[RMDB]
RNA sequence: GGGAACGACUCGAGUAGAGUCGAAAAGAGUGCAAUCCCCGGAACCCCCGCUAAGAGGUCUCCGGAUCUUCUUGCUUGUGGUUCCUGUGGUUUCACCUCGGAAGGCCGCCGCGGACCUGCAGAGAAGGAUAAGUACUCUCUUCGGAGAGUACUUAUCAAAAGAAACAACAACAACAAC
Reactivity to DMS in 0.01 (KOAc 150mM, MgCl2 10mM, bicine 150mM(pH8.5), 24C), signal-to-noise 2, nucleotides 027 to 126: g030a080g000u000g000c110a030a060u000c010c020c010c260g000g000a010a010c010c000c010c070c110g000c030u020a010a020g010a030g010g010u000c010u000c300c160g010g000a000u000c000u000u020c010u000u000g000c010u000u000g000u020g020g010u010u000c000c000u010g010u000g000g000u010u000u000c020a020c030c040u000c030g000g020a300a070g000g000c030c020g020c070c070g000c080g000g010a050c040c020u000g010c130a120g000a110g000a090a090g000